Conditions: 150 mM KOAc, 10 mM MgCl2 and 150 mM bicine (pH 8.5), 24 C. Structure probing data (DMS and 2A3) for a 177-nucleotide construct. The 2A3 profile rests on 3,440 reads. For DMS, 5,130 sequencing reads were counted.
[RMDB]
RNA sequence: GGGAACGACUCGAGUAGAGUCGAAAACUGCGUCGAUGCCUGCGAUGACAUUAUGGGCCGCAUAGGCUAUGCCAAAGGCCUGAUCAAAUACACCACAGAAACCAAUUUAGAAGGGGGCGAUACUCGACAACCAGAGAAUUUUCGAAUUCUCUGGUUGAAAAGAAACAACAACAACAAC
Reactivity to DMS in 0.01 (KOAc 150mM, MgCl2 10mM, bicine 150mM(pH8.5), 24C), signal-to-noise 5, nucleotides 027 to 126: c050u000g010c060g020u000c040g020a100u000g020c040c000u020g010c070g030a100u000g020a080c110a080u000u010a100u000g000g010g010c010c030g030c160a090u010a170g000g000c020u020a060u010g010c030c040a050a140a170g020g000c000c010u000g010a070u010c100a070a060a080u000a090c060a030c030c020a040c070a070g000a080a100a120c060c030a070a080u000u010u010a070g010a100a110g000g000g010g010g010c060g000a120u010a050c030u000c020g000a280
Reactivity to 2A3 in 0.01 (KOAc 150mM, MgCl2 10mM, bicine 150mM(pH8.5), 24C), signal-to-noise 3, nucleotides 027 to 126: c020u030g030c000g050u020c030g020a020u090g040c000c000u010g000c030g030a050u070g030a030c020a040u120u120a090u270g030g010g000c010c020g050c020a080u080a090g010g000c060u090a070u230g010c010c010a070a060a020g000g000c000c000u020g000a040u030c010a000a070a030u110a070c030a020c040c020a040c000a020g080a070a020a000c020c010a050a060u110u120u140a130g030a130a080g010g050g000g020g000c000g020a020u030a120c020u020c010g050a010